[RMDB]
RNA sequence: GGGAACGACUCGAGUAGAGUCGAAAAUCAAUUCAGACUAAAUUUGCCCCUGGAGGUUACCCAUUAUUGUGGAGCUUUGCCAUGGGUGUGGCUACUACUAUUGACAGGUCUAUGGGGGCAUUGAAUACCUCAUUCUACAAUUCGUUGUAGAAUGAGGAAAAGAAACAACAACAACAAC
Reactivity to 2A3 in 0.01 (KOAc 150mM, MgCl2 10mM, bicine 150mM(pH8.5), 24C), signal-to-noise 9, nucleotides 027 to 126: u060c020a020a070u160u080c060a050g110a160c070u170a100a070a180u070u050u040g010c000c000c000c000u030g070g030a060g070g020u130u200a040c010c010c010a060u160u150a040u060u160g010u020g000g010a010g000c020u110u090u120g040c080c090a280u180g230g000g010u090g010u030g010g000c000u100a210c010u000a010c010u010a200u060u040g070a050c050a110g020g030u010c000u020a070u100g010g000g000g000g000c000a000u030u050g020a010a030u080a050
Reactivity to DMS in 0.01 (KOAc 150mM, MgCl2 10mM, bicine 150mM(pH8.5), 24C), signal-to-noise 3, nucleotides 027 to 126: u020c080a110a090u010u040c080a060g000a220c150u030a080a070a150u030u010u000g020c000c000c000c030u000g000g010a020g000g000u030u050a080c010c010c050a110u040u000a030u000u000g010u000g000g000a080g020c020u000u020u030g020c000c000a150u010g020g000g010u000g010u010g000g000c020u010a100c010u000a030c060u020a020u030u020g040a130c190a100g000g000u000c020u000a040u030g000g000g000g000g000c030a000u020u020g020a100a080u040a170